Conditions: 150 mM KOAc, 10 mM MgCl2 and 150 mM bicine (pH 8.5), 24 C. Chemical mapping of a 170-nucleotide RNA with DMS and 2A3. For 2A3 the reverse transcriptase was SuperScript II with manganese. Reactivities are given for positions 27 through 129. For DMS the reverse transcriptase was MarathonRT.
RNA sequence: GGGAACGACUCGAGUAGAGUCGAAAAUGGUGGUUACUACGUCAAACCUGGAGGUACCAGUAGCGGAGAUGCCACCACUGCAUAUGCCAAUAGUGUCUUUAACAUUUUGCAGGCGACAACUGCUAAUCCACUUGGUUGUUCGCAACCAAGAAAAGAAACAACAACAACAAC
Reactivity to DMS in 0.01 (KOAc 150mM, MgCl2 10mM, bicine 150mM(pH8.5), 24C), signal-to-noise 9, nucleotides 027 to 129: u030g030g000u020g020g030u000u040a140c030u000a030c040g040u060c110a070a150a140c300c020u000g020g020a210g060g050u110a160c000c020a020g000u000a230g000c000g000g000a000g000a220u010g020c020c000a040c050c000a030c030u000g000c030a010u010a070u000g000c060c050a080a100u010a060g040u020g030u000c050u010u000u000a140a180c080a050u000u000u000u000g030c000a010g020g000c000g000a020c130a100a100c050u000g020c050u000a050a090u020c040c060a090
Reactivity to 2A3 in 0.01 (KOAc 150mM, MgCl2 10mM, bicine 150mM(pH8.5), 24C), signal-to-noise 9, nucleotides 027 to 129: u060g000g000u010g000g010u060u100a090c010u010a010c010g100u110c130a130a110a140c030c000u010g020g030a140g150g140u220a200c010c000a000g010u020a010g010c000g010g010a020g010a040u070g010c010c000a000c000c000a000c000u010g000c010a030u050a030u120g030c030c030a100a060u120a100g130u120g060u090c070u060u180u100a110a060c030a080u110u110u060u080g000c010a010g010g030c010g060a030c040a120a040c030u070g010c010u040a040a070u030c020c010a030